Structure probing data (DMS) for a 177-nucleotide construct. The data come from the RNA Mapping Database (RMDB), library M2PK50. DMS (dimethyl sulfate) methylates the pairing face of unpaired adenines and cytosines. The reactions ran in a buffer of 150 mM KOAc, 10 mM MgCl2 and 150 mM bicine (pH 8.5), at 24 C.
[RMDB]
RNA sequence: GGGAACGACUCGAGUAGAGUCGAAAAGCAUACAACUUCGGUUGUAUGCAACGACAGAGUUGACUGUCAUAAACAACGUAACAUGUGAGUUACAAUAACUCAUUGCAGCAGCUUUCGAGCUGCUGAAUAGUCCGGAACAGUUCGCUGUUCCGGACUAAAAAGAAACAACAACAACAAC
Reactivity to DMS in 0.01 (KOAc 150mM, MgCl2 10mM, bicine 150mM(pH8.5), 24C), signal-to-noise 1, nucleotides 027 to 126: g010c000a010u000a010c000a000a020c000u010u020c150g020g000u000u000g050u010a000u000g010c000a000a040c160g000a020c010a010g000a090g040u010u000g000a210c020u000g010u010c160a090u010a020a060a000c090a070a020c120g010u010a070a120c120a070u040g010u010g010a020g000u000u000a080c260a120a080u000a070a010c000u000c040a010u000u000g000c030a010g020c000a010g000c000u000u000u020c150g000a000g040c000u010g000c000u000g000a060a070
Record summary:
The DMS profile rests on 758 reads.